This 207-nucleotide RNA was probed chemically with 2A3. For 2A3 the reverse transcriptase was SuperScript II with manganese. The reactions ran in a buffer of 150 mM KOAc, 10 mM MgCl2 and 150 mM bicine (pH 8.5), at 24 C.

RNA sequence: GGGAACGACUCGAGUAGAGUCGAAAAGGGGUCGCUCGCUAGUACUUGGAUUUAGCUAUGAGGUGUACUGAAGCCUCCACGGUACACUACCCACCAUAGCUUGUCAGUACAAACGAGCGACGGAGGCACCCAAAACGCUCGUGUUCGCACGAGCGAAUCUAGACGUACUCUUCGGAGUACGUCUAGAAAAAGAAACAACAACAACAAC
Reactivity to 2A3 in 0.01 (KOAc 150mM, MgCl2 10mM, bicine 150mM(pH8.5), 24C), signal-to-noise 1, nucleotides 027 to 156: g050g000g030g000u000c000g010c000u000c000g000c020u040a030g030u000a030c120u180u300g220g020a080u230u270u300a030g000c000u000a010u010g000a010g080g000u010g000u000a000c000u000g040a070a040g000c000c000u000c000c000a000c020g000g010u000a000c000a000c000u020a030c020c100c000a030c020c000a000u000a000g010c020u020u000g010u050c100a080g000u020a010c000a020a080a000c000g000a000g020c000g000a000c000g000g000a000g000g000c000a020c020c010c000a040a110a030a130c010g010c000u000c000g010u010g050u220u160c300g020c080a000c000g010a000g000c010g000a000a000